This 177-nucleotide RNA was probed chemically with 2A3 and DMS. It was measured as part of the RMDB library OK2TRN. The RNA was probed in 150 mM KOAc, 10 mM MgCl2 and 150 mM bicine (pH 8.5) at 24 C. 2A3 adducts were read by reverse transcription with SuperScript II with manganese.

[RMDB]
RNA sequence: GGGAACGACUCGAGUAGAGUCGAAAAAGGUAACUUUGCAUCCGGUAAAAGGUCCGUUGUGACUAUGAGCAAUAUUUCCUGUCCCCAACGUGGAAAUGUCAGAGAGUGAAGUAGCCACAGGACGGGCGUUCUCAUCUUUAUUCGUAAAGAUGAGAACAAAAGAAACAACAACAACAAC
Reactivity to 2A3 in 0.01 (KOAc 150mM, MgCl2 10mM, bicine 150mM(pH8.5), 24C), signal-to-noise 4, nucleotides 027 to 126: a000g090g010u070a100a070c040u040u040u060g010c020a060u000c030c010g030g060u130a110a130a020a030g110g010u000c000c010g050u050u090g040u050g030a020c020u020a050u190g020a020g010c040a060a080u030a040u110u030u030c000c010u030g100u120c020c000c000c000a030a040c060g060u080g000g030a010a020a060u070g040u050c040a050g080a020g010a010g270u040g030a060a020g010u010a020g020c010c000a010c000a010g100g010a020c030g000g000g000c050
Reactivity to DMS in 0.01 (KOAc 150mM, MgCl2 10mM, bicine 150mM(pH8.5), 24C), signal-to-noise 7, nucleotides 027 to 126: a020g010g010u000a060a080c050u000u000u000g010c110a120u000c030c040g030g010u010a050a050a100a110g010g010u000c000c020g020u000u000g010u000g010a020c010u000a030u000g010a300g010c030a070a040u000a050u000u000u000c000c010u010g000u000c040c010c030c080a080a220c070g000u000g010g000a020a020a030u000g010u000c120a090g010a130g000a140g020u000g000a090a160g010u000a040g010c010c000a020c030a090g010g010a050c080g000g010g010c140